RNA sequence: GGGAACGACUCGAGUAGAGUCGAAAAAUGCUUCCUCAGUUCGCCGCUCUCGAAGUCGCAGCAGCAGACACGGUUUUGGGUAUCCCCGAAACGGGCUGCGACCGGCGAAGCGAUUCGUUCUCUGCCGGUGGGACAGGACGUUCGCGUCCUGUCCCACAAAAGAAACAACAACAACAAC
Reactivity to 2A3 in 0.01 (KOAc 150mM, MgCl2 10mM, bicine 150mM(pH8.5), 24C), signal-to-noise 1, nucleotides 027 to 126: a000u130g000c030u050u000c000c000u020c080a050g050u060u000c010g000c030c000g020c000u010c010u070c270g170a070a100g020u000c000g000c010a000g030c000a050g050c070a030g030a060c050a000c080g110g020u010u010u000u010g060g000g000u070a150u090c010c030c000c000g000a000a000a010c000g000g030g000c030u000g000c000g000a000c000c000g030g000c000g020a080a010g020c010g040a000u010u010c050g000u010u040c010u010c000u020g040c020c080g100